[RMDB]
RNA sequence: GGGAACGACUCGAGUAGAGUCGAAAACCGUCAUCGACUUCGAAGGUUCGAUUCGAGCGCAGCGAGAAAGCGUUGCCGUAGGCAACGACCCGAAGGGCGAAGCGCGCAGCGCUGAGUCAUCCUUCCCACUCGCUGCCAUGUUCGCAUGGCAGCGAGUAAAAGAAACAACAACAACAAC
Reactivity to 2A3 in 0.01 (KOAc 150mM, MgCl2 10mM, bicine 150mM(pH8.5), 24C), signal-to-noise 2, nucleotides 027 to 126: c010c000g090u080c080a070u160c000g100a050c010u140u030c090g030a060a030g170g010u040u160c040g010a000u000u000c010g060a000g030c000g000c030a010g000c000g040a040g080a120a120a000g110c010g040u000u020g000c060c000g140u110a060g050g010c080a020a010c090g210a140c020c020c000g080a160a120g060g000g000c130g050a040a000g000c000g000c020g000c000a060g010c020g000c030u020g010a000g000u000c000a000u020c020c000u000u040c020c000c000